[RMDB]
RNA sequence: GGGAACGACUCGAGUAGAGUCGAAAAGAUAUGGACUAGGUACGUUCGACGAAGUACCUCGGAAACGAGGUACAGAGAACGUGUACUAGUCCUAAGUCAAAGGUAGAGCUCUUCGGAGCUCUACCAACUUCCCUUCAUGGUUCGCCAUGAAGGGAAGAAAAGAAACAACAACAACAAC
Reactivity to DMS in 0.01 (KOAc 150mM, MgCl2 10mM, bicine 150mM(pH8.5), 24C), signal-to-noise 2, nucleotides 027 to 126: g010a040u000a300u000g000g000a010c000u000a000g000g000u010a010c010g000u010u000c000g000a270c300g020a070a090g000u000a000c000c000u020c000g000g000a080a100a210c000g000a010g010g000u000a000c000a020g000a130g000a000a000c010g010u000g010u000a300c000u000a000g000u010c000c000u020a000a090g010u010c050a110a130a140g030g000u010a010g000a010g010c020u000c000u020u020c180g010g010a010g010c000u010c000u000a000c000c000a010a080
Reactivity to 2A3 in 0.01 (KOAc 150mM, MgCl2 10mM, bicine 150mM(pH8.5), 24C), signal-to-noise 2, nucleotides 027 to 126: g050a020u080a060u170g000g000a000c010u000a020g060g050u180a050c040g070u000u020c060g150a300c020g010a300a030g000u010a000c020c000u000c020g000g040a050a020a030c020g000a000g010g000u010a000c010a010g030a010g000a050a000c010g020u020g010u070a140c000u010a000g000u000c000c000u000a020a000g000u000c050a120a050a090g010g010u010a010g000a000g000c000u010c020u090u160c300g010g020a000g020c000u010c000u020a000c010c000a000a000